[RMDB]
RNA sequence: GGGAACGACUCGAGUAGAGUCGAAAAAUAAAUGAUGAGAUGUUGAUAUUGGUAAAUUUCCUAUUGAGACUGAACGUAUUUCCAUCCAGGCAAUCAACACUUUAUUUGCUUCCUUACCCCCAUAUCCUCUGCUGCCUCUUUUUGGAAACUUUGUAUAAAAUCGUAAUCGUUUCGACGAUUACGAUUUAAAAGAAACAACAACAACAAC
Reactivity to 2A3 in 0.01 (KOAc 150mM, MgCl2 10mM, bicine 150mM(pH8.5), 24C), signal-to-noise 1, nucleotides 027 to 156: a020u090a030a100a050u110g010a050u080g030a050g060a100u040g000u060u050g000a050u070a040u090u090g020g010u110a010a190a220u090u050u110c070c050u060a110u080u210g030a050g010a010c020u030g000a110a000c030g030u100a060u030u080u050c000c050a000u030c040c060a000g050g000c000a030a000u060c000a000a090c020a090c020u000u150u060a030u070u130u070g030c020u030u010c010c030u020u080a070c000c030c030c000c000a000u020a000u060c010c030u010c040u030g100c020u000g000c020c000u030c000u030u150u060u030u010g000g000a040a000a000c000u040u010u090g140u110a060u200a140
Reactivity to DMS in 0.01 (KOAc 150mM, MgCl2 10mM, bicine 150mM(pH8.5), 24C), signal-to-noise 2, nucleotides 027 to 156: a070u010a070a080a100u010g010a100u020g000a090g030a030u010g010u000u000g010a150u010a030u000u010g020g000u000a040a080a150u000u000u000c020c030u000a170u000u000g000a050g010a100c030u000g000a070a060c070g010u000a080u000u020u010c030c000a070u000c030c040a050g010g030c030a080a090u010c030a040a070c060a020c020u000u000u000a110u020u020u000g030c030u020u010c030c020u000u010a160c040c000c000c000c020a110u010a050u000c010c030u000c030u000g000c010u000g010c010c000u000c020u010u000u000u000u010g030g010a120a040a100c070u000u000u010g020u000a140u010a050